[RMDB]
RNA sequence: GGGAACGACUCGAGUAGAGUCGAAAAGAUAUGGACGCUGGGAGCACUUUGAUCGUGUUUGUCGGAAACGACAACACGGGAGUGUCAGCGUCCUAAGUCAAAAUCAUUAGUGUUCGCACUAAUGAAAGUCCAAAUGAAUGUUCGCAUUCAUUUGGACAAAAGAAACAACAACAACAAC
Reactivity to DMS in 0.01 (KOAc 150mM, MgCl2 10mM, bicine 150mM(pH8.5), 24C), signal-to-noise 2, nucleotides 027 to 126: g010a000u000a020u010g000g000a030c000g020c010u000g000g000g050a300g020c000a020c000u000u000u000g000a020u020c010g000u020g000u000u000u000g050u000c010g010g000a010a010a010c000g020a020c000a010a000c000a000c010g040g010g000a000g020u000g000u010c000a010g000c000g000u010c010c020u000a000a060g000u000c010a130a110a140a200u000c010a010u000u000a000g020u000g010u010u020c300g020c000a010c000u000a010a000u000g000a000a060a190
Reactivity to 2A3 in 0.01 (KOAc 150mM, MgCl2 10mM, bicine 150mM(pH8.5), 24C), signal-to-noise 4, nucleotides 027 to 126: g000a000u010a000u050g020g010a010c010g000c020u030g030g080g220a300g220c010a000c000u300u300u060g010a020u030c010g000u010g030u020u080u190g020u000c000g000g000a000a010a000c000g010a000c000a010a000c020a010c010g000g010g000a020g000u020g240u300c000a000g000c020g000u000c000c000u000a000a000g010u000c020a000a000a030a270u030c010a000u000u010a010g000u000g080u060u060c300g050c170a010c020u000a020a010u010g020a070a030a010